Background:
This 207-nucleotide RNA was probed chemically with 2A3. The 2A3 profile rests on 516 reads.
RNA sequence: GGGAACGACUCGAGUAGAGUCGAAAACAGAGAAUCGUUCGCGAUUCUCUGAAAAAAACCUUUGUGUCCUAUGAAGUGGUGACCUCCCCCAUUGGGGAAGAGGCAAUGCCAUGGAGGACACUCUGGUAAAAAACGCCGAAGGUUCGCCUUCGGCGAACGUACCAAGACGAUUCGUCGUCUUGGUACGAAAAGAAACAACAACAACAAC
Reactivity to 2A3 in 0.01 (KOAc 150mM, MgCl2 10mM, bicine 150mM(pH8.5), 24C), signal-to-noise 1, nucleotides 027 to 156: c000a000g000a000g020a030a000u000c000g010u000u140c290g020c000g030a010u000u000c000u000c010u030g000a000a000a000a000a000a000a000c010c030u000u000u000g000u000g000u000c000c010u270a300u300g020a010a000g050u000g000g120u130g300a300c000c000u020c030c000c000c050c000a180u210u300g000g010g000g000a100a060g000a020g000g000c000a020a000u040g000c000c000a000u010g010g040a010g020g000a000c000a000c000u000c000u000g000g000u000a150a300a000a000a000a000c000g000c000c000g000a000a000g070g060u170u300c300g280c070c040u020u020c010g000g000c000g000a000a050